The record gives the reactivity of an RNA of 177 nucleotides to 2A3.
It was measured as part of the RMDB library OK1LIB.
Reactivities are given for positions 27 through 126.

[RMDB]
RNA sequence: GGGAACGACUCGAGUAGAGUCGAAAAAGAUAUCUUAGAUAAAUCAGAUAUUGAUUUAGGAGCCAUAUUUGCAGGCUGUGAUAUUUCAUGCUUAGAUGCAAUUACACUUGACUUGACUGGAUUAAUAAGUGAUAUCGCACUUCGGUGCGAUAUCACUAAAAGAAACAACAACAACAAC
Reactivity to 2A3 in 0.01 (KOAc 150mM, MgCl2 10mM, bicine 150mM(pH8.5), 24C), signal-to-noise 1, nucleotides 027 to 126: a000g000a000u120a000u120c140u130u220a210g020a300u060a160a000a060u080c020a000g000a040u000a000u080u060g000a060u040u000u000a040g000g020a100g000c000c000a100u140a140u210u140u170g080c060a160g000g130c060u060g000u000g000a060u080a140u240u300u180c170a020u020g000c000u040u000a210g080a250u040g000c060a000a080u000u290a000c000a000c000u140u190g000a060c000u000u000g060a040c000u000g300g000a000u060u060a020a290u020a000
The 2A3 profile rests on 204 reads. High 2A3 reactivity points to a flexible backbone, as in loops and unpaired stretches.